[RMDB]
Chemical mapping of a 177-nucleotide RNA with 2A3 and DMS. 2A3 adducts were read by reverse transcription with SuperScript II with manganese.

RNA sequence: GGGAACGACUCGAGUAGAGUCGAAAAAACACUGUGUAGGAUAGGUGGGAGGCUUUGAAGAGUGGACGCCAGUCUGCAUGGAGCCGACCUUGAAAUACCACCCUUUAAUGAAGAAAAACAAAGCCAACAACUAUAACGUGUUCGCACGUUAUAGUUGAAAAGAAACAACAACAACAAC
Reactivity to 2A3 in 0.01 (KOAc 150mM, MgCl2 10mM, bicine 150mM(pH8.5), 24C), signal-to-noise 2, nucleotides 027 to 126: a000a000c100a030c040u110g000u020g000u090a040g010g060a040u020a040g000g020u040g040g040g050a100g000g000c000u040u090u030g100a120a080g180a040g090u030g010g020a010c020g050c090c000a030g010u000c020u020g000c030a020u070g060g000a000g000c010c010g020a050c000c020u000u020g020a000a040a020u050a010c000c000a020c000c020c010u040u050u090a140a060u220g120a040a100g100a020a110a000a000a030c080a040a050a010g020c020c000a040a060
Reactivity to DMS in 0.01 (KOAc 150mM, MgCl2 10mM, bicine 150mM(pH8.5), 24C), signal-to-noise 4, nucleotides 027 to 126: a080a040c090a090c060u010g020u010g010u000a050g010g000a080u000a040g020g010u000g010g010g000a180g020g020c000u010u000u000g020a090a050g010a090g030u000g010g010a030c030g020c180c210a080g000u000c020u010g000c030a070u010g010g000a040g000c000c010g000a070c130c020u000u000g000a040a060a070u000a060c010c000a040c010c010c040u000u010u000a090a110u020g010a080a080g000a030a040a050a060a100c090a050a050a090g000c090c060a080a160